Chemical mapping of a 207-nucleotide RNA with 2A3 and DMS.
For 2A3 the reverse transcriptase was SuperScript II with manganese.
The reactions ran in a buffer of 150 mM KOAc, 10 mM MgCl2 and 150 mM bicine (pH 8.5), at 24 C.

RNA sequence: GGGAACGACUCGAGUAGAGUCGAAAAUGGUAGUCCGCCACUCUAAGGGGACGCCUUUAGAAGAAGAGGCUAGGUGGUAUUCCGGUGUGGGAUACUUGGUUAUAUGUAACGCUAAUUGCAUAAGAUUAAAACUUUGCAUACUUCGGUAUGCAAAGAAUCGUAAUCAACGGUUCGCCGUUGAUUACGAAAAAGAAACAACAACAACAAC
Reactivity to 2A3 in 0.01 (KOAc 150mM, MgCl2 10mM, bicine 150mM(pH8.5), 24C), signal-to-noise 2, nucleotides 027 to 156: u120g050g000u040a090g020u040c030c000g070c090c060a120c090u120c060u130a160a130g000g000g000g060a010c000g110c000c000u110u120u070a040g020a100a010g030a030a000g000a020g070g000c070u060a030g060g060u050g040g020u080a050u060u060c010c010g080g030u120g050u150g070g000g030a020u010a010c020u050u050g040g000u110u030a090u000a020u180g040u040a000a010c040g000c170u060a070a070u060u060g000c030a020u020a060a070g030a080u070u210a050a050a020a040c010u020u010u000g000c000a000u000a000c000u020u030c070g050g000u000a000u000g000c000a000a000a000g000a000a000
Reactivity to DMS in 0.01 (KOAc 150mM, MgCl2 10mM, bicine 150mM(pH8.5), 24C), signal-to-noise 1, nucleotides 027 to 156: u000g010g030u000a040g010u010c010c010g010c010c010a280c130u010c040u040a050a110g010g010g030g000a070c230g010c000c050u000u000u000a040g010a080a090g010a150a070g000a190g010g010c030u000a060g000g040u010g000g010u010a080u000u000c000c010g030g020u010g010u000g020g000g000a020u010a030c020u010u000g000g010u000u010a150u010a100u000g030u000a070a070c050g010c080u010a060a180u000u010g030c000a030u000a060a190g020a280u000u020a030a030a130a140c010u000u000u010g000c000a040u010a000c000u000u000c300g080g000u000a010u010g000c010a070a020a060g000a040a040